[RMDB]
RNA sequence: GGGAACGACUCGAGUAGAGUCGAAAAUUAAUGGCGGCAAGAUUACUGUUCAGUAUAAUUUGAGUCAUGAAAGUGCCCUAGAUGCUGCAAACCACUGUGGAACAGUUGCCAAUGGUAUCCUAGAAAAUACUGCCUAGUAUUUCGAUACUAGGCAGUAAAAAGAAACAACAACAACAAC
Reactivity to DMS in 0.01 (KOAc 150mM, MgCl2 10mM, bicine 150mM(pH8.5), 24C), signal-to-noise 4, nucleotides 027 to 126: u000u010a170a070u000g020g010c040g020g020c050a060a040g020a150u000u000a020c010u000g010u000u010c100a040g020u000a060u010a040a100u010u000u010g000a280g000u000c010a030u000g000a080a040a140g010u000g000c030c010c030u010a070g010a080u000g000c020u000g000c080a060a080a130c080c020a050c100u000g020u000g010g010a060a160c050a050g000u010u000g000c040c050a030a110u020g000g010u000a050u010c010c050u010a130g000a100a040a040a120
Reactivity to 2A3 in 0.01 (KOAc 150mM, MgCl2 10mM, bicine 150mM(pH8.5), 24C), signal-to-noise 1, nucleotides 027 to 126: u080u040a030a050u000g010g050c000g050g100c010a000a030g060a160u040u050a040c010u010g050u180u180c080a050g040u040a080u020a120a120u020u060u080g020a020g000u040c000a030u010g000a050a000a020g040u040g000c000c000c000u000a040g000a030u070g010c020u020g030c040a040a000a050c020c000a030c070u070g040u070g070g050a040a050c030a040g020u010u020g030c000c000a020a040u010g030g010u040a030u000c000c000u050a030g250a000a110a080a020

The record gives the reactivity of an RNA of 177 nucleotides to DMS and 2A3. The reactions ran in a buffer of 150 mM KOAc, 10 mM MgCl2 and 150 mM bicine (pH 8.5), at 24 C. In probing experiments dimethyl sulfate is read out at A N1 and C N3, which are open when not base-paired. DMS adducts were read by reverse transcription with MarathonRT. 2A3 adducts were read by reverse transcription with SuperScript II with manganese.